Conditions: 150 mM KOAc, 10 mM MgCl2 and 150 mM bicine (pH 8.5), 24 C. Structure probing data (DMS and 2A3) for a 177-nucleotide construct. For DMS, 21,215 sequencing reads were counted. It was measured as part of the RMDB library OK1LIB. The 2A3 profile rests on 15,159 reads. For DMS the reverse transcriptase was MarathonRT.

[RMDB]
RNA sequence: GGGAACGACUCGAGUAGAGUCGAAAAGACUGGCUGUGGAGCCGUGAGCACCUACAUAUCGCGAUAUGUAUCAUCCUUAGGCUAGUUAUGCUCCUUUUUUGGCGGAUGACAAGCCAGCACAAUUAGAGGGAUCCGAUUAGUUCGCUGGUCGGAUCCCAAAAGAAACAACAACAACAAC
Reactivity to DMS in 0.01 (KOAc 150mM, MgCl2 10mM, bicine 150mM(pH8.5), 24C), signal-to-noise 7, nucleotides 027 to 126: g010a140c010u000g000g000c010u010g020u010g010g000a060g030c020c070g020u030g010a110g020c030a080c090c030u010a020c010a010u000a010u010c110g010c260g010a060u010a000u010g000u000a030u010c040a040u010c040c010u010u010a120g010g010c070u000a060g020u010u020a050u040g000c030u000c010c020u000u010u030u020u040u000g020g010c300g000g000a020u000g000a030c010a040a070g020c000c000a030g010c060a120c190a100a090u030u020a090g010a300
Reactivity to 2A3 in 0.01 (KOAc 150mM, MgCl2 10mM, bicine 150mM(pH8.5), 24C), signal-to-noise 9, nucleotides 027 to 126: g070a070c010u010g000g000c010u010g020u070g070g030a010g020c040c050g120u130g000a030g000c010a030c010c010u010a000c000a010u030a000u030c080g030c100g200a010u000a000u020g010u000a020u040c010a020u010c010c000u050u080a050g060g000c050u030a060g110u240u060a120u280g030c020u080c010c000u050u130u030u020u130u170g090g020c040g010g010a010u020g000a010c010a070a000g000c000c000a000g010c010a010c040a050a140u190u160a050g030a090